[RMDB]
This 177-nucleotide RNA was probed chemically with 2A3 and DMS. DMS adducts were read by reverse transcription with MarathonRT. The data come from the RNA Mapping Database (RMDB), libraries RFM100 and RFMREP. The reactions ran in a buffer of 150 mM KOAc, 10 mM MgCl2 and 150 mM bicine (pH 8.5), at 24 C. Values cover nucleotides 27 to 126.
RNA sequence: GGGAACGACUCGAGUAGAGUCGAAAAGGAUGGCCGAUGGGCCCCACAAGGUUACUGACGUCAGCCAAACUCCGAAUGCCAGAGUGUGAGAGCGCGGCAGUGAGACUGCGGGGGAUAAGCUUCGUAGCAACCCACCUUGGUUCGCCAAGGUGGGUUGAAAAGAAACAACAACAACAAC
Reactivity to 2A3 in 0.01 (KOAc 150mM, MgCl2 10mM, bicine 150mM(pH8.5), 24C), signal-to-noise 2, nucleotides 027 to 126: g030g030a070u040g020g010c000c010g050a040u080g040g020g060c000c000c000c000a180c050a080a000g040g040u050u150a170c000u010g000a000c000g060u060c030a000g010c000c000a070a030a030c020u010c000c000g050a150a040u160g010c060c010a020g060a040g080u060g020u080g030a120g020a020g040c040g010c020g020g010c000a010g050u040g070a080g030a040c010u030g000c040g000g010g000g010g010a030u070a180a000g020c000u020u050c020g020u020a040g010
Reactivity to DMS in 0.01 (KOAc 150mM, MgCl2 10mM, bicine 150mM(pH8.5), 24C), signal-to-noise 2, nucleotides 027 to 126: g000g010a090u010g000g000c010c040g010a160u000g000g000g000c000c010c000c060a130c290a060a210g010g020u000u000a060c010u010g010a300c300g010u000c060a070g040c000c030a200a130a110c010u000c010c000g010a090a100u020g000c110c060a130g000a060g000u040g040u010g020a100g000a100g000c040g000c070g030g000c010a010g020u000g000a040g000a070c040u000g000c130g000g000g000g000g000a100u040a080a130g000c020u010u010c020g000u050a060g000